RNA sequence: GGGAACGACUCGAGUAGAGUCGAAAAACAUGCUGGCCAACCCAACCCCACGAUCCUCCAUCGGCAUGAUCAUGAUGUGUUCUCAAAUAUCAGGCCAGUACAUCACCAUGCUCGUGCUGGUAAAGGCAACUUAUGCCCAAGUUCGCUUGGGCAUAAACGUUAUAGUAUUGUUCGCAAUACUAUAACGAAAAGAAACAACAACAACAAC
Reactivity to DMS in 0.01 (KOAc 150mM, MgCl2 10mM, bicine 150mM(pH8.5), 24C), signal-to-noise 3, nucleotides 027 to 156: a050c060a100u010g020c000u000g000g000c010c040a120a190c050c030c040a120a130c030c000c010c020a120c120g010a150u010c010c010u000c030c020a040u000c010g010g080c000a030u000g000a060u000c000a040u010g030a040u000g020u010g000u000u000c050u000c030a110a100a140u020a100u000c100a070g010g020c020c010a070g040u000a030c040a060u000c040a040c020c020a070u000g010c080u000c040g050u000g010c000u050g030g050u000a020a040a030g010g020c090a060a090c100u000u000a020u000g020c000c010c010a010a060g020u000u010c300g000c000u000u000g010g010g010c010a000u000a000a020a130
Reactivity to 2A3 in 0.01 (KOAc 150mM, MgCl2 10mM, bicine 150mM(pH8.5), 24C), signal-to-noise 8, nucleotides 027 to 156: a000c050a010u070g010c010u010g010g010c020c010a040a040c080c020c050a040a070c020c020c020c030a080c100g050a150u070c010c030u040c040c020a050u050c010g010g000c000a000u010g010a010u010c010a000u010g030a040u050g040u000g030u090u020c060u000c040a080a110a060u280a110u150c080a040g000g020c010c000a000g000u010a010c020a160u080c010a020c030c000a010u010g000c000u010c010g010u010g000c010u010g000g000u050a100a080a030g020g000c020a040a040c050u020u010a000u010g000c000c000c000a020a000g000u040u060c090g020c140u000u010g010g000g010c000a000u000a000a000a000